[RMDB]
RNA sequence: GGGAACGACUCGAGUAGAGUCGAAAAGAUAUGGAUGGUCCCGACUUUUGACGAUGGAUUGUCGGAAACGACAAUUUUCAUCGAUAAGUCGGACCAUCCUAAGUCAAAAUCCGUCUUCGGACGGAAAGAAUCGAACGUAGUUCGCUACGUUCGAUUCAAAAGAAACAACAACAACAAC
Reactivity to 2A3 in 0.01 (KOAc 150mM, MgCl2 10mM, bicine 150mM(pH8.5), 24C), signal-to-noise 5, nucleotides 027 to 126: g020a010u060a010u090g010g000a000u010g010g020u180c190c130c050g000a010c020u140u150u170u300g300a190c080g000a000u010g010g010a000u010u000g010u010c020g020g010a060a060a050c010g010a000c000a000a010u020u010u070u040c000a000u000c000g020a030u060a110a000g000u010c030g010g000a000c000c000a000u000c000c000u000a010a000g000u000c000a000a000a020a230u020c010c000g010u000c000u030u080c300g180g000a010c010g000g000a050a040a000
Reactivity to DMS in 0.01 (KOAc 150mM, MgCl2 10mM, bicine 150mM(pH8.5), 24C), signal-to-noise 5, nucleotides 027 to 126: g010a030u000a300u000g000g010a010u000g000g000u000c100c060c030g010a010c020u000u000u000u010g010a210c150g000a010u000g000g010a010u000u010g010u000c000g000g000a070a090a210c000g030a020c000a000a010u000u000u000u010c000a010u000c000g010a110u000a010a020g000u010c000g000g000a020c000c000a000u000c000c000u000a010a070g010u010c020a140a100a110a170u000c000c000g000u000c000u000u000c250g020g000a010c000g000g010a010a030a060
An RNA of 177 nucleotides, treated with 2A3 and DMS and read out base by base.
2A3 adducts were read by reverse transcription with SuperScript II with manganese.